[RMDB]
RNA sequence: GGGAACGACUCGAGUAGAGUCGAAAAUGUCCUGGGGAAUGGGGCUAUGGUUCAGAUUCAGACGUGUGACCGCGUGGCUUUUAAUUGCUGCAUGCAGAGCAUGGGCCCCGGGGUAAUAGGCAUGAGCGGCGUGACUUUUGCCAACGUGCGAUUCACCCUGAGCACAUCUAUUCGUAGAUGUGCUCAGAAAAGAAACAACAACAACAAC
Reactivity to DMS in 0.01 (KOAc 150mM, MgCl2 10mM, bicine 150mM(pH8.5), 24C), signal-to-noise 1, nucleotides 027 to 156: u000g000u000c000c030u000g010g010g000g010a040a100u000g030g020g000g030c040u000a030u000g020g010u010u010c050a130g010a250u000u000c040a170g020a140c060g060u010g020u000g030a070c050c030g020c060g070u010g020g030c000u000u060u030u000a060a170u010u000g030c010u000g040c050a110u000g040c100a160g050a300g010c040a060u010g010g100g020c000c000c000c050g050g010g080g020u000a010a070u010a110g060g000c060a030u010g010a130g040c040g020g030c090g020u000g000a090c090u000u000u020u000g030c020c050a060a080c020g000u000g020c000g040a110u000u010c090a060c000c010
Reactivity to 2A3 in 0.01 (KOAc 150mM, MgCl2 10mM, bicine 150mM(pH8.5), 24C), signal-to-noise 3, nucleotides 027 to 156: u130g040u030c020c010u030g000g000g000g050a090a180u120g010g000g030g000c020u040a040u150g120g020u050u160c110a040g010a180u100u050c050a040g120a120c090g050u080g040u070g040a080c030c000g050c030g010u030g010g010c000u050u170u070u110a180a230u230u130g020c030u020g010c010a110u080g000c060a040g060a040g100c020a020u040g020g030g030c010c000c000c000g000g000g000g000u050a060a040u050a080g000g020c000a010u010g040a020g100c060g040g000c020g030u090g050a160c070u150u100u150u180g000c010c010a010a030c120g030u060g000c020g000a040u070u120c070a070c020c010

Structure probing data (DMS and 2A3) for a 207-nucleotide construct. The DMS profile rests on 1,611 reads. For 2A3, 1,098 sequencing reads were counted. It was measured as part of the RMDB library OK3TST. The RNA was probed in 150 mM KOAc, 10 mM MgCl2 and 150 mM bicine (pH 8.5) at 24 C. DMS adducts were read by reverse transcription with MarathonRT.